[RMDB]
RNA sequence: GGGAACGACUCGAGUAGAGUCGAAAAGAUAUGGAGGUUGGUAUAGGGAGCUCGGGAUUCGGAAACGAAUCCGGAGCGAAGAACUAUACUUUCGAACCUCCUAAGUCAAACACUGGUUCGCCAGUGACGUACGGAUAAACUUCGGUUUAUCCGUACGAAAAGAAACAACAACAACAAC
Reactivity to 2A3 in 0.01 (KOAc 150mM, MgCl2 10mM, bicine 150mM(pH8.5), 24C), signal-to-noise 1, nucleotides 027 to 126: g000a010u030a020u030g020g000a000g000g010u160u240g130g030u030a000u030a030g030g060g030a040g070c010u010c110g170g040g010a000u000u000c000g000g000a040a010a000c030g000a000a000u000c010c020g020g000a020g000c030g000a100a070g010a010a000c010u000a000u010a030c000u120u080u180c160g060a130a130c000c000u000c000c000u000a010a050g010u000c070a060a090a070c010a000c010u010g100g060u080u140c300g040c070c010a000g010u010g030a070
Reactivity to DMS in 0.01 (KOAc 150mM, MgCl2 10mM, bicine 150mM(pH8.5), 24C), signal-to-noise 2, nucleotides 027 to 126: g000a020u000a110u010g000g000a010g000g010u000u010g010g020u000a000u000a020g030g020g010a040g040c000u000c000g010g000g000a000u010u020c010g010g010a030a030a070c000g050a030a000u000c000c000g000g000a010g040c000g050a030a170g000a100a200c030u010a000u000a020c020u000u010u000c280g010a130a200c000c000u010c000c000u000a010a060g010u020c010a130a090a280c020a030c010u000g000g000u000u030c280g030c010c000a010g010u000g000a170